The data come from the RNA Mapping Database (RMDB), library OK3TST. The record gives the reactivity of an RNA of 207 nucleotides to 2A3 and DMS.
RNA sequence: GGGAACGACUCGAGUAGAGUCGAAAACAUGGUAUGGCCUCGCAUCCGGCCUACCAACAGAAUCAACAACUUCGGAUGCGGUGGGCGAGAGCCCUAAGAAGGAGUCUCCCCGCCUGGGGAGCUCCGUAUGACUUAAUGUAUUACCAGGCGGAUACAAACCUAUAAUAGUAUUCGUACUAUUAUAGGUAAAAGAAACAACAACAACAAC
Reactivity to 2A3 in 0.01 (KOAc 150mM, MgCl2 10mM, bicine 150mM(pH8.5), 24C), signal-to-noise 4, nucleotides 027 to 156: c010a040u050g000g000u090a090u230g010g000c010c000u030c020g000c000a000u000c000c000g000g000c000c010u000a000c010c010a010a010c040a040g160a030a080u240c040a010a110c010a040a060c080u200u140c050g000g000a000u000g000c010g010g040u060g000g000g010c020g000a030g010a040g060c010c000c020u010a040a000g050a050a050g010g000a010g030u020c000u000c060c000c010c010g000c000c000u000g000g000g000g000a000g000c000u000c000c000g000u020a050u070g040a010c060u070u110a130a030u180g090u190a110u130u120a050c000c000a010g000g000c090g000g050a080u190a130c060a040a140
Reactivity to DMS in 0.01 (KOAc 150mM, MgCl2 10mM, bicine 150mM(pH8.5), 24C), signal-to-noise 2, nucleotides 027 to 156: c080a210u010g000g030u000a000u010g040g000c000c030u010c100g050c020a050u000c000c020g070g120c010c000u010a040c040c000a020a300c050a140g020a110a100u000c100a070a110c080a100a090c100u010u000c000g030g020a020u010g050c000g010g010u000g000g010g000c030g020a270g010a210g000c000c010c010u000a010a060g020a200a060g010g000a060g000u010c010u000c020c000c020c000g000c100c100u020g010g010g050g000a050g020c020u000c000c020g000u000a020u000g020a100c060u000u010a110a060u000g020u000a030u000u010a070c020c030a080g000g010c030g010g010a150u000a060c080a060a080
For DMS, 2,526 sequencing reads were counted.